[RMDB]
RNA sequence: GGGAACGACUCGAGUAGAGUCGAAAAGAUAUGGAUGAGAACUACAGGUCACCUAAGACAGGUAAUCGGAAACGAUUACUCGAGGAAGUCCUGCUCAUCCUAAGUCAAAGGAUGCUUCGGCAUCCAACAAAGCUAACAUGUUCGCAUGUUAGCUUUGAAAAGAAACAACAACAACAAC
Reactivity to 2A3 in 0.01 (KOAc 150mM, MgCl2 10mM, bicine 150mM(pH8.5), 24C), signal-to-noise 5, nucleotides 027 to 126: g020a020u060a030u110g010g000a000u040g020a010g000a100a080c140u170a060c300a000g010g030u050c050a170c120c040u100a180a040g040a060c040a020g060g000u010a000a000u010c000g020g010a040a030a030c010g000a010u000u010a010c000u000c030g010a030g020g010a230a080g080u040c000c000u010g000c000u000c000a010u020c000c000u010a080a010g020u010c030a170a040a000g010g000a000u010g000c010u040u070c170g130g000c000a010u000c000c010a000a000
Reactivity to DMS in 0.01 (KOAc 150mM, MgCl2 10mM, bicine 150mM(pH8.5), 24C), signal-to-noise 7, nucleotides 027 to 126: g010a020u000a300u000g000g000a010u000g010a020g010a130a040c090u010a290c010a030g000g010u000c090a250c010c010u010a170a100g010a120c300a060g010g000u000a000a000u000c000g010g000a100a070a090c000g010a010u000u000a010c000u000c050g000a010g010g010a120a110g000u000c010c020u000g010c010u000c010a020u000c000c000u000a020a080g000u000c050a110a140a100g000g000a010u000g000c010u010u010c220g010g000c000a010u000c000c000a060a070
The record gives the reactivity of an RNA of 177 nucleotides to 2A3 and DMS. The RNA was probed in 150 mM KOAc, 10 mM MgCl2 and 150 mM bicine (pH 8.5) at 24 C.